[RMDB]
RNA sequence: GGGAACGACUCGAGUAGAGUCGAAAAGAUAUGGACCGAUCAGGCUUUUGACGCGAGAAACAUCGGAAACGAUGUAUAUCGCGAUAAGCCUGGCGGUCCUAAGUCAAAACCUUGGUUCGCCAAGGAACGUCCUUACUUGGUUCGCCAAGUAAGGACGAAAAGAAACAACAACAACAAC
Reactivity to 2A3 in 0.01 (KOAc 150mM, MgCl2 10mM, bicine 150mM(pH8.5), 24C), signal-to-noise 2, nucleotides 027 to 126: g030a010u090a020u110g000g000a000c030c000g080a300u170c000a010g000g000c030u190u160u120u240g300a130c100g000c070g000a010g030a090a100a000c000a040u010c010g070g000a070a090a000c030g010a000u000g100u010a040u020a040u080c000g030c000g000a010u020a010a000g000c000c000u000g020g000c000g000g010u000c000c000u000a020a000g000u000c040a020a030a090a070c010c000u000u000g050g060u120u090c300g000c110c020a000a000g040g040a040a070
Reactivity to DMS in 0.01 (KOAc 150mM, MgCl2 10mM, bicine 150mM(pH8.5), 24C), signal-to-noise 1, nucleotides 027 to 126: g010a100u000a300u000g020g000a000c020c000g000a070u000c000a000g000g020c000u050u000u000u030g020a160c000g010c000g000a010g010a270a160a030c000a000u000c010g000g000a170a060a300c000g010a000u010g000u010a050u000a150u000c000g010c000g000a130u000a000a010g000c000c000u030g000g000c000g000g000u000c000c020u000a000a100g010u000c050a080a040a030a270c020c000u070u000g000g010u000u000c150g030c000c030a110a030g000g020a030a050